[RMDB]
This 170-nucleotide RNA was probed chemically with DMS and 2A3. The 2A3 profile rests on 64,323 reads. 2A3 adducts were read by reverse transcription with SuperScript II with manganese. Conditions: 150 mM KOAc, 10 mM MgCl2 and 150 mM bicine (pH 8.5), 24 C.
RNA sequence: GGGAACGACUCGAGUAGAGUCGAAAAUGUCAACGAUGUUGUCCUCGCAAUUCUCUCUGGAACCACAACUAAUGUUGACAAAAUACGCCAGCUUCUCAAAGGUGUCACCCUUGACAAGUUGCGUGAUGGACUUCCAUGUUCGCAUGGAAGAAAAGAAACAACAACAACAAC
Reactivity to DMS in 0.01 (KOAc 150mM, MgCl2 10mM, bicine 150mM(pH8.5), 24C), signal-to-noise 9, nucleotides 027 to 129: u040g000u000c020a010a010c030g000a220u030g000u030u020g000u020c070c030u000c140g020c170a100a120u050u030c040u020c070u000c090u010g030g010a080a090c100c130a040c050a020a020c040u020a100a110u050g020u000u000g000a050c020a040a070a080a070u060a060c030g000c080c050a030g010c010u030u000c190u000c030a020a040a030g010g000u020g010u030c200a090c070c010c040u000u010g010a030c100a000a020g030u000u000g000c050g000u020g020a120u030g000g020a210
Reactivity to 2A3 in 0.01 (KOAc 150mM, MgCl2 10mM, bicine 150mM(pH8.5), 24C), signal-to-noise 9, nucleotides 027 to 129: u080g000u000c000a000a010c020g040a050u120g000u030u010g020u020c020c030u050c070g110c090a110a220u250u050c080u020c020u010c060u130g040g030a060a050c080c020a020c040a040a010c020u110a090a080u240g000u000u000g000a010c000a000a040a010a010u160a010c020g020c040c000a000g000c010u020u000c000u000c000a090a090a030g060g010u130g160u170c110a110c010c020c000u000u000g000a010c010a020a010g010u010u010g020c030g020u050g040a140u090g050g050a030
DMS adducts were read by reverse transcription with MarathonRT.